An RNA of 207 nucleotides, treated with 2A3 and DMS and read out base by base. For 2A3, 1,430 sequencing reads were counted.

RNA sequence: GGGAACGACUCGAGUAGAGUCGAAAAUACAGGUGCUCAGAAUUAAAGGAAACUUUAAUUUGACUUGGCUCUCAGAUACCAAGUGUGUUAGAUACUUAAGAGUUUGCAAAUAAUUAAGGGGAGGCAAAGAAUUGUGUGCGUGUGUGUGCGUGUACAAGGACUAAUCGUAUUUCGAUACGAUUAGUCCAAAAGAAACAACAACAACAAC
Reactivity to 2A3 in 0.01 (KOAc 150mM, MgCl2 10mM, bicine 150mM(pH8.5), 24C), signal-to-noise 3, nucleotides 027 to 156: u150a010c040a030g030g030u050g020c000u000c070a040g010a090a040u040u020a010a010a000g000g040a070a060a030c010u020u000u050a020a050u020u030u060g060a020c000u010u010g000g000c000u010c010u030c060a030g010a130u100a090c010c000a050a000g040u030g000u000g040u090u050a070g020a080u050a130c030u100u070a130a020g030a020g080u030u050u090g000c020a010a100a110u120a110a150u290u140a100a080g000g010g000g000a020g000g020c050a010a070a020g050a070a080u080u060g040u010g010u010g030c030g000u070g010u030g030u010g020u040g030c020g000u010g010u010a030c020a080a050
Reactivity to DMS in 0.01 (KOAc 150mM, MgCl2 10mM, bicine 150mM(pH8.5), 24C), signal-to-noise 1, nucleotides 027 to 156: u020a090c000a060g040g000u000g010c040u000c070a260g010a110a040u000u000a020a040a040g000g000a170a060a190c010u000u000u000a030a030u000u000u000g010a050c050u000u000g020g050c010u000c060u000c060a110g000a150u000a040c010c000a000a080g000u000g050u000g010u000u000a140g020a100u000a010c020u000u000a040a080g000a080g000u000u000u000g000c070a090a150a080u000a070a080u000u010a060a120g000g020g000g020a040g000g000c060a030a080a140g010a050a130u000u000g000u000g010u000g020c040g000u010g000u000g020u000g050u000g000c030g040u000g020u000a060c050a070a220